[RMDB]
This 177-nucleotide RNA was probed chemically with 2A3 and DMS. DMS adducts were read by reverse transcription with MarathonRT.

RNA sequence: GGGAACGACUCGAGUAGAGUCGAAAACCGCGCAGGCGGAAAGCGCUGCGCGUGUAGUGCGCCGACUGGCGGCCGUUGCGGGGCUUGAAACGCGGGUAGCGCGCACGCCCGGCGAAGAAGUUCGCAUGACUCAGACUAAAUUCGUUUAGUCUGAGUCAAAAGAAACAACAACAACAAC
Reactivity to 2A3 in 0.01 (KOAc 150mM, MgCl2 10mM, bicine 150mM(pH8.5), 24C), signal-to-noise 3, nucleotides 027 to 126: c000c000g000c000g010c000a020g180g010c010g070g220a220a140a030g130c270g000c020u040g020c010g000c000g000u040g000u020a100g030u070g020c050g000c000c010g040a070c040u080g120g060c020g030g000c040c010g060u110u090g090c120g040g100g010g010c020u090u030g140a090a180a040c060g000c040g050g040g010u040a010g050c020g000c000g000c060a000c010g000c000c010c000g030g010c020g010a040a030g050a040a020g070u040u050c000g040c020a030u060
Reactivity to DMS in 0.01 (KOAc 150mM, MgCl2 10mM, bicine 150mM(pH8.5), 24C), signal-to-noise 3, nucleotides 027 to 126: c050c010g010c010g020c000a030g020g000c000g030g010a070a100a170g020c000g020c020u000g000c020g000c040g030u020g020u010a060g000u010g000c020g000c020c010g010a080c040u010g060g000c000g000g000c030c060g010u030u010g030c070g000g040g010g010c030u030u000g000a110a120a170c090g040c000g000g020g010u020a100g010c020g010c040g020c040a060c040g020c010c020c010g000g000c020g010a040a060g000a110a100g000u000u000c010g010c070a250u000